RNA sequence: GGGAACGACUCGAGUAGAGUCGAAAAGAAAGAAAGAAAGAAAGGUAUGAAGUCCUAUUCACUCGGGAUAGGAUAAACUUCAUAUUGAUCGUGUAUGUGCUAACGCACAUACACGAAUGCGCAUGCAGAACUGCAUGCAUGAACAUACCGAGUGCAAGCCACCUGAGGUAUUCGUACCUCAGGUGGCAAAAGAAACAACAACAACAAC
Reactivity to 2A3 in 0.01 (KOAc 150mM, MgCl2 10mM, bicine 150mM(pH8.5), 24C), signal-to-noise 1, nucleotides 027 to 156: g020a010a020a000g080a020a070a000g090a050a110a000g070a120a110a000g000g010u030a030u030g000a030a000g010u030c010c000u000a000u020u000c030a000c010u000c000g000g010g000a000u000a000g030g000a000u050a010a080a000c000u000u040c000a000u000a010u060u080g050a090u040c000g000u000g010u000a000u000g020u000g000c020u070a050a100c130g000c030a000c000a000u000a000c000a000c030g020a000a000u020g000c030g000c020a000u000g110c000a050g070a290a120c240u020g000c020a010u000g010c000a010u140g000a040a050c090a010u110a090c020c020g010a010g000u050g070c020a040a080

An RNA of 207 nucleotides, treated with 2A3 and read out base by base. For 2A3 the reverse transcriptase was SuperScript II with manganese. 2A3 is a SHAPE reagent: it acylates the 2'-hydroxyl of flexible nucleotides of all four kinds. For 2A3, 726 sequencing reads were counted.